[RMDB]
RNA sequence: GGGAACGACUCGAGUAGAGUCGAAAAUCGCUCGAUCAGCCCGGUGAAGUAGGCCAUCAUCGAGCCGACCGCGUCCAGUGCGCCGGUGGUGGCGCCGUCAACCGCGUUCGCCGCCACGAUGGCCUGGGUACAGGUUUAGCUUCGGCUAAACCUGUACAAAAGAAACAACAACAACAAC
Reactivity to 2A3 in 0.01 (KOAc 150mM, MgCl2 10mM, bicine 150mM(pH8.5), 24C), signal-to-noise 1, nucleotides 027 to 126: u040c010g010c000u030c040g010a070u000c020a030g080c000c000c000g080g060u180g050a130a080g050u150a010g050g000c000c000a030u040c000a020u020c030g010a000g040c020c000g000a000c040c040g000c000g010u060c070c050a100g050u100g230c030g000c010c040g090g040u060g110g100u100g040g000c010g020c010c000g020u000c040a060a100c020c010g010c020g030u050u050c020g000c020c010g030c020c010a020c030g000a020u010g000g010c040c010u040g000g020
Reactivity to DMS in 0.01 (KOAc 150mM, MgCl2 10mM, bicine 150mM(pH8.5), 24C), signal-to-noise 3, nucleotides 027 to 126: u000c070g040c050u010c040g010a070u000c130a120g010c020c000c040g040g000u020g020a090a130g030u010a040g010g020c010c030a040u000c030a110u010c040g010a050g010c030c010g000a010c030c010g020c020g000u010c070c060a130g000u010g050c030g000c030c040g020g000u000g000g020u020g010g020c010g020c300c020g010u000c190a090a240c180c090g000c020g030u010u000c010g000c020c010g000c100c080a060c080g010a000u000g000g010c000c000u000g010g000